[RMDB]
RNA sequence: GGGAACGACUCGAGUAGAGUCGAAAAUAACAGCUCUCCUAACAGCGUAACUAACAACUGUUUUCGUCCUUAAACCAACGAUAACGGCUGUUAGGCCAUGUUUUGUAAGGGCUGUUAGGAGCGCUGUGUACCGACCAUCCUUCGGGAUGGUCGGUACAAAAGAAACAACAACAACAAC
Reactivity to 2A3 in 0.01 (KOAc 150mM, MgCl2 10mM, bicine 150mM(pH8.5), 24C), signal-to-noise 1, nucleotides 027 to 126: u070a010a020c040a010g010c000u000c000u010c000c000u000a010a000c010a010g040c060g130u140a060a030c030u000a000a000c000a000a000c010u020g000u000u040u030u000c000g000u030c020c030u120u180a010a160a020c050c010a010a010c000g000a020u000a010a030c010g000g000c000u000g000u020u000a000g030g030c010c000a090u140g100u070u180u060u170g140u080a030a070g050g070g030c000u000g000u000u000a000g000g000a000g000c000g000c010u020g000u000